[RMDB]
RNA sequence: GGGAACGACUCGAGUAGAGUCGAAAAGACUGCGUGCACUUGAGACGAUAUCGAGCCGGAAAUUAAUCGAUAAUGUCUCAAGUAGUGGAUACGAUCCGGCAAGUAUCGACUACAUGUGCUCGUAGGAGCGCUGCAGGCUAUUCGUAGCCUGCAGCGCAAAAGAAACAACAACAACAAC
Reactivity to 2A3 in 0.01 (KOAc 150mM, MgCl2 10mM, bicine 150mM(pH8.5), 24C), signal-to-noise 2, nucleotides 027 to 126: g090a010c000u000g000c000g010u020g000c000a000c010u000u000g020a010g000a000c000g020a020u000a000u010c020g040a020g000c030c000g000g110a030a150a070u300u240a070a240u140c010g000a000u000a070a000u110g030u000c010u000c020a020a040g000u000a000g010u030g100g000a000u000a000c020g010a010u000c000c000g000g000c020a000a080g000u000a020u010c020g040a000c000u010a000c000a020u130g000u000g000c000u020c000g000u020a010g000g010a030
The record gives the reactivity of an RNA of 177 nucleotides to 2A3.
The RNA was probed in 150 mM KOAc, 10 mM MgCl2 and 150 mM bicine (pH 8.5) at 24 C.
The data come from the RNA Mapping Database (RMDB), library OK1LIB.
The 2A3 profile rests on 1,003 reads.